RNA sequence: GGGAACGACUCGAGUAGAGUCGAAAAGCUUUGUUGACAUGCACUUGUGCUGUUCACUUGUUCACAGCUGAACUUGUAUCCAUUGGAUGCGUGUGUGUAUUCAGUUCCAUACAAUCUGAACACAUGGAUGUAACUGAACAUUCGUGUUCAGUUACAUAAAAGAAACAACAACAACAAC
Reactivity to DMS in 0.01 (KOAc 150mM, MgCl2 10mM, bicine 150mM(pH8.5), 24C), signal-to-noise 9, nucleotides 027 to 126: g010c070u000u010u000g010u000u000g010a060c060a040u010g010c060a050c070u010u000g020u000g020c080u000g000u000u000c070a060c100u000u000g010u000u000c140a090c250a080g010c070u000g000a050a060c090u000u010g010u000a040u000c030c030a200u010u010g020g020a030u000g010c020g020u000g010u000g010u000g010u000a110u010u000c020a020g010u000u000c070c080a140u010a080c170a050a060u000c040u000g010a020a030c020a020c040a050u000g000g000
Reactivity to 2A3 in 0.01 (KOAc 150mM, MgCl2 10mM, bicine 150mM(pH8.5), 24C), signal-to-noise 9, nucleotides 027 to 126: g030c040u120u120u130g070u070u110g050a030c020a060u120g030c020a020c070u080u100g010u030g070c060u010g050u080u040c030a030c020u040u080g050u140u110c080a060c050a100g030c060u030g020a070a040c010u050u120g010u040a020u010c010c040a220u070u240g040g010a040u020g030c050g010u090g020u020g000u010g010u080a130u030u040c010a020g010u070u030c060c010a030u050a180c020a020a070u010c020u030g010a030a000c020a000c000a040u070g110g030

Structure probing data (DMS and 2A3) for a 177-nucleotide construct.
Conditions: 150 mM KOAc, 10 mM MgCl2 and 150 mM bicine (pH 8.5), 24 C.
For DMS, 29,067 sequencing reads were counted.
For DMS the reverse transcriptase was MarathonRT.